[RMDB]
RNA sequence: GGGAACGACUCGAGUAGAGUCGAAAAAGAUACCAGGUUCAUCUCACUGGGGAGUGUCGGAAAGUGGGUGCAGGACAGUGGGUGCAGUGCACCGUGCGUGAGCCGAAGCAGGGCGAGGCAUCGCCUCGACUUACGUACAGUUCGCUGUACGUAAGUCAAAAGAAACAACAACAACAAC
Reactivity to 2A3 in 0.01 (KOAc 150mM, MgCl2 10mM, bicine 150mM(pH8.5), 24C), signal-to-noise 6, nucleotides 027 to 126: a010g100a040u150a090c010c030a010g000g050u040u070c030a070u030c050u010c030a050c060u050g000g000g010g040a070g050u100g050u080c050g030g050a150a040a030g080u090g050g000g010u050g000c040a030g030g060a050c020a040g040u070g030g030g020u030g000c030a030g070u020g100c020a020c020c030g030u060g020c020g030u070g030a030g000c000c010g020a030a010g010c070a060g010g040g030c010g000a010g020g050c040a100u080c050g010c000c000u020c030
Reactivity to DMS in 0.01 (KOAc 150mM, MgCl2 10mM, bicine 150mM(pH8.5), 24C), signal-to-noise 9, nucleotides 027 to 126: a070g010a120u010a120c030c030a090g010g010u000u010c090a070u000c050u000c050a100c050u010g000g000g000g000a090g010u000g020u010c060g010g000a060a070a090g020u000g010g010g010u000g010c070a080g010g010a080c100a070g010u000g010g000g010u000g010c030a100g010u000g020c040a040c020c020g020u000g010c070g010u010g010a080g000c030c020g010a070a100g020c120a090g000g000g000c040g010a040g010g010c150a090u000c070g010c010c010u000c120

This 177-nucleotide RNA was probed chemically with 2A3 and DMS. For 2A3 the reverse transcriptase was SuperScript II with manganese. For DMS, 21,363 sequencing reads were counted.